RNA sequence: GGGAACGACUCGAGUAGAGUCGAAAAGACCACCUUGCAGUUUCAUGGCACACUCUCUCCAUUUCUCUACCGUUCAUGCAGCGGUUGAUCGAUUGGGUUGCUGGUUGAUUGAUCGAUCGAUGGUCAGUAAAAGCUUAUGAUUCGUCAUAAGCUUUUAAAAAGAAACAACAACAACAAC
Reactivity to DMS in 0.01 (KOAc 150mM, MgCl2 10mM, bicine 150mM(pH8.5), 24C), signal-to-noise 9, nucleotides 027 to 126: g000a140c030c020a090c070c040u010u010g010c060a060g000u010u000u000c060a070u010g000g010c040a060c080a080c040u000c020u000c030u000c020c030a080u010u000u010c040u010c030u010a060c030c030g010u010u000c040a110u010g010c110a060g010c020g000g010u000u000g010a030u000c050g000a030u000u000g010g010g010u000u000g010c040u000g000g010u010u000g010a060u000u000g000a030u010c020g010a050u010c050g010a060u010g010g010u010c070a110g010
Reactivity to 2A3 in 0.01 (KOAc 150mM, MgCl2 10mM, bicine 150mM(pH8.5), 24C), signal-to-noise 9, nucleotides 027 to 126: g050a010c010c010a030c020c010u030u090g030c030a050g020u020u040u060c050a060u070g040g000c020a010c000a010c040u030c000u000c000u020c030c010a040u040u080u020c040u010c010u020a040c010c000g030u040u040c050a090u220g040c050a010g010c010g000g020u010u050g030a040u040c040g020a030u020u070g100g010g020u040u070g020c030u050g020g070u040u040g030a090u040u040g010a020u040c020g010a010u040c010g030a050u110g020g020u030c020a010g030
Structure probing data (DMS and 2A3) for a 177-nucleotide construct.
For DMS the reverse transcriptase was MarathonRT.
The reactions ran in a buffer of 150 mM KOAc, 10 mM MgCl2 and 150 mM bicine (pH 8.5), at 24 C.
For 2A3 the reverse transcriptase was SuperScript II with manganese.